[RMDB]
RNA sequence: GGGAACGACUCGAGUAGAGUCGAAAAGAUAUGGACGGCAACUGGUCAACAGCUCCGAUCGGAAACGAUCGGAGACAUGACUUGUUGACCGUCCUAAGUCAAACCGAUACACUUCGGUGUAUCGGAACAUAUCCAACAUCUUCGGAUGUUGGAUAUGAAAAGAAACAACAACAACAAC
Reactivity to 2A3 in 0.01 (KOAc 150mM, MgCl2 10mM, bicine 150mM(pH8.5), 24C), signal-to-noise 5, nucleotides 027 to 126: g030a020u080a040u180g010g000a000c010g000g000c010a000a010c010u040g020g000u020c020a060a050c070a280g040c010u000c000c000g000a000u020c010g030g030a100a050a070c020g000a000u000c000g000g000a010g020a010c010a010u020g010a000c010u020u010g000u010u000g030a030c000c000g000u010c000c000u000a010a000g020u000c030a000a030a120c000c000g000a010u000a000c010a000c010u070u170c300g140g000u010g000u000a000u000c010g000g000a010a010
Reactivity to DMS in 0.01 (KOAc 150mM, MgCl2 10mM, bicine 150mM(pH8.5), 24C), signal-to-noise 7, nucleotides 027 to 126: g010a050u010a300u010g010g010a010c000g000g010c010a010a010c010u010g010g010u000c000a030a090c300a230g010c010u010c000c000g000a000u000c000g010g000a130a120a210c010g010a000u000c000g000g000a000g000a010c100a140u000g000a020c010u000u000g000u000u010g000a130c000c000g010u000c000c000u000a020a090g010u010c040a100a130a220c000c000g010a020u000a010c000a000c000u000u020c210g040g020u000g000u000a000u010c000g010g000a040a080

This 177-nucleotide RNA was probed chemically with 2A3 and DMS. The 2A3 profile rests on 26,752 reads. It was measured as part of the RMDB library TTRDES. For DMS the reverse transcriptase was MarathonRT.